Description
Chemical mapping of a 177-nucleotide RNA with 2A3 and DMS. High 2A3 reactivity points to a flexible backbone, as in loops and unpaired stretches. For 2A3, 2,432 sequencing reads were counted. The RNA was probed in 150 mM KOAc, 10 mM MgCl2 and 150 mM bicine (pH 8.5) at 24 C. DMS adducts were read by reverse transcription with MarathonRT.
RNA sequence: GGGAACGACUCGAGUAGAGUCGAAAAAGAAUAGUUUUCGAACUAUUCUCACGACGACCUUGGGAAACCCUGAGGCGCGAUCCCACGCGAUCGUCUGAUCGAACACCUGGUUGUUCGCAACCAGGAAUUUCUCUUUAUAUUUCGAUAUAAAGAGAAAAAAAGAAACAACAACAACAAC
Reactivity to 2A3 in 0.01 (KOAc 150mM, MgCl2 10mM, bicine 150mM(pH8.5), 24C), signal-to-noise 3, nucleotides 027 to 126: a000g000a010a010u010a000g020u020u040u070u220c250g050a010a010c000u010a000u000u010c020u000c010a020c050g290a020c000g290a300c010c000u060u010g040g020g000a300a300a190c050c000c010u010g000a010g020g010c010g000c000g020a010u010c000c000c010a020c080g140c020g020a030u030c010g230u100c300u210g010a030u010c010g040a070a020c040a050c040c000u010g000g000u020u010g000u040u050c170g000c050a000a020c000c000a000g000g000a000a000
Reactivity to DMS in 0.01 (KOAc 150mM, MgCl2 10mM, bicine 150mM(pH8.5), 24C), signal-to-noise 3, nucleotides 027 to 126: a030g000a010a000u000a010g000u010u000u000u020c140g000a010a010c000u000a020u000u000c010u010c070a210c050g000a090c020g000a130c010c000u000u000g010g000g010a190a170a120c260c010c020u000g010a000g000g020c030g010c010g000a140u000c010c000c000a090c270g010c000g000a020u000c010g010u010c160u010g000a030u000c000g010a150a120c200a140c000c000u010g010g000u000u000g010u000u000c200g020c000a010a010c010c000a000g010g000a010a030